[RMDB]
RNA sequence: GGGAACGACUCGAGUAGAGUCGAAAAGGAAGGAUAAUAACUCACGAAGGGAGCUUGAAGUGGUUUCCUGGCCCUCGAAAUAAGCAGCAGAGGGGACGAGCGGUAUAGAAUACCGGUCUUGUGAACAGUUGCAGUUUACAUUCGUGUAAACUGCAACAAAAGAAACAACAACAACAAC
Reactivity to 2A3 in 0.01 (KOAc 150mM, MgCl2 10mM, bicine 150mM(pH8.5), 24C), signal-to-noise 6, nucleotides 027 to 126: g120g020a020a020g040g040a000u010a130a040u070a140a030c030u040c030a030c050g020a050a090g000g000g030a010g030c020u070u030g070a110a090g060u120g140g000u030u000u030c020c010u050g110g000c000c010c000u010c010g040a030a050a090u280a130a010g050c120a020g000c040a020g000a010g010g020g010g010a020c300g000a020g050c000g000g050u000a030u030a070g300a260a010u010a030c010c000g010g080u000c000u030u090g030u020g010a060a010c020a100
Reactivity to DMS in 0.01 (KOAc 150mM, MgCl2 10mM, bicine 150mM(pH8.5), 24C), signal-to-noise 5, nucleotides 027 to 126: g000g000a040a040g010g010a060u030a110a080u030a060a160c150u000c030a090c040g010a050a030g020g010g010a050g000c020u000u010g020a060a100g020u000g000g010u000u020u010c000c010u010g000g010c010c000c000u010c010g010a040a030a090u050a080a090g010c190a110g010c120a140g000a040g000g000g000g000a040c090g000a000g030c010g000g010u000a020u010a090g000a110a300u000a000c000c020g010g010u010c010u020u000g010u000g000a040a100c170a130